Record summary:
The record gives the reactivity of an RNA of 177 nucleotides to 2A3 and DMS. The 2A3 profile rests on 1,694 reads. Reactivities are given for positions 27 through 126.
[RMDB]
RNA sequence: GGGAACGACUCGAGUAGAGUCGAAAAGAGGCUUAUCCCGGGGAACUCGGCGAAUCGUCCCCACAUAGCAGCUCCCAGGACCCCCUUCCAAAAGUGACCGAAGGGGGUGCUAGGACCGUGGGGGACCCCCUAUUAGAUGGUUCGCCAUCUAAUAGGGAAAAGAAACAACAACAACAAC
Reactivity to 2A3 in 0.01 (KOAc 150mM, MgCl2 10mM, bicine 150mM(pH8.5), 24C), signal-to-noise 2, nucleotides 027 to 126: g020a000g050g040c030u080u130a060u150c010c030c070g010g000g010g000a070a050c070u050c100g030g000c060g080a110a060u110c030g020u020c010c030c050c010a090c010a020u200a040g110c100a030g030c080u010c030c010c010a000g030g040a020c030c010c010c000c000u000u000c010c010a080a090a040a160g180u160g110a080c070c000g000a000a000g000g000g000g000g000u000g000c000u000a000g000g000a010c010c030g020u030g010g000g000g020g000a000c010c010
Reactivity to DMS in 0.01 (KOAc 150mM, MgCl2 10mM, bicine 150mM(pH8.5), 24C), signal-to-noise 3, nucleotides 027 to 126: g010a160g000g020c060u000u000a140u000c040c020c000g010g000g000g000a090a080c090u000c060g010g030c030g000a060a080u020c110g000u000c000c000c000c000a040c090a110u000a140g020c150a110g000c280u000c010c000c010a020g010g010a030c000c000c000c000c000u010u000c010c100a020a070a120a160g030u020g020a090c200c180g000a020a030g010g000g000g010g010u000g000c010u000a030g000g000a000c040c080g000u000g000g010g010g000g010a090c090c180